[RMDB]
Annotation:
Source: RMDB library RNAMAK, as collected in RNAgym. The record gives the reactivity of an RNA of 207 nucleotides to DMS and 2A3. The 2A3 profile rests on 4,457 reads. The reactions ran in a buffer of 150 mM KOAc, 10 mM MgCl2 and 150 mM bicine (pH 8.5), at 24 C. For DMS, 2,716 sequencing reads were counted. Values cover nucleotides 27 to 156. DMS adducts were read by reverse transcription with MarathonRT.

RNA sequence: GGGAACGACUCGAGUAGAGUCGAAAAGUCGCUGGGCGUUCUCUAGCGUGAGGCGAAGAACAUGGGUGCAGCACCUGAAGCGCGCACGGGUGUGGAAGCCCAUGGGAGCCUUCGGGACGCCUGUGCUGAAGCGCGCACGGCAACCGAAAGGUGCGGGCAUAGCGACAAUGUUCGCAUUGUCGCUAUGAAAAGAAACAACAACAACAAC
Reactivity to DMS in 0.01 (KOAc 150mM, MgCl2 10mM, bicine 150mM(pH8.5), 24C), signal-to-noise 1, nucleotides 027 to 156: g020u000c080g020c010u000g020g040g010c020g000u000u010c000u000c020u000a090g020c210g020u000g010a090g110g100c050g000a160a250g000a090a210c000a040u000g010g030g090u000g020c110a300g020c060a020c000c000u020g030a030a120g000c030g030c040g000c010a300c020g030g000g000u000g000u000g030g030a210a300g000c000c010c010a020u000g000g030g010a100g000c000c000u000u000c040g020g040g010a080c040g050c000c000u000g020u000g100c020u000g000a080a120g010c040g000c070g030c000a300c040g030g000c000a110a160c000c000g000a120a090a110g030g010u000g000c030g000g030g010
Reactivity to 2A3 in 0.01 (KOAc 150mM, MgCl2 10mM, bicine 150mM(pH8.5), 24C), signal-to-noise 2, nucleotides 027 to 156: g110u070c000g000c020u000g010g000g000c010g050u110u020c080u020c130u150a130g090c090g230u260g070a030g000g000c020g160a300a000g000a000a000c000a000u000g040g000g000u150g050c300a060g010c000a050c000c000u040g030a220a050g000c000g000c000g000c010a000c000g000g000g000u010g000u040g060g150a050a010g010c030c000c000a000u000g000g000g000a010g000c000c000u010u050c040g010g000g000a000c020g000c000c000u000g000u010g000c010u030g010a130a050g000c020g000c000g000c010a010c000g010g010c000a000a020c000c000g020a050a040a020g010g000u000g000c000g010g000g000